Structure probing data (2A3 and DMS) for a 177-nucleotide construct. Values are in units of 0.01, from 0 to 300, in steps of 10. The reactions ran in a buffer of 150 mM KOAc, 10 mM MgCl2 and 150 mM bicine (pH 8.5), at 24 C.

[RMDB]
RNA sequence: GGGAACGACUCGAGUAGAGUCGAAAAUGUUUCAGGGCCACCAUGGAAGUAAGUAACAGAGCCCUGUUUAUCCGUAGCAUCAUCAACACCACUUUUGUUUUGUGCAUACUGAUACUAGCAGUUUGUGCACGUCCAGGUUAUUCGUAACCUGGACGUGAAAAGAAACAACAACAACAAC
Reactivity to 2A3 in 0.01 (KOAc 150mM, MgCl2 10mM, bicine 150mM(pH8.5), 24C), signal-to-noise 2, nucleotides 027 to 126: u110g060u000u080u030c000a000g000g000g030c000c000a050c060c080a090u130g060g010a070a030g030u220a070a110g020u040a110a050c030a080g070a020g030c000c000c000u000g020u010u020u020a020u000c020c040g030u060a010g030c050a030u090c010a020u040c010a040a030c010a030c060c010a110c080u080u080u050u090g100u080u060u060u100g000u020g010c010a010u030a050c010u030g020a040u060a270c100u060a080g050c000a020g020u000u070u060g000u040g040
Reactivity to DMS in 0.01 (KOAc 150mM, MgCl2 10mM, bicine 150mM(pH8.5), 24C), signal-to-noise 3, nucleotides 027 to 126: u010g030u000u010u010c030a040g000g020g020c020c030a100c110c080a150u010g000g010a110a090g010u030a090a130g020u010a080a110c070a070g000a210g000c020c030c020u000g010u000u000u000a080u000c020c030g000u000a070g000c050a040u000c020a040u000c040a050a060c080a080c040c040a090c100u000u010u010u000g010u000u000u010u000g020u010g000c000a030u000a030c030u010g000a090u010a120c240u010a090g000c030a020g000u000u000u000g020u000g020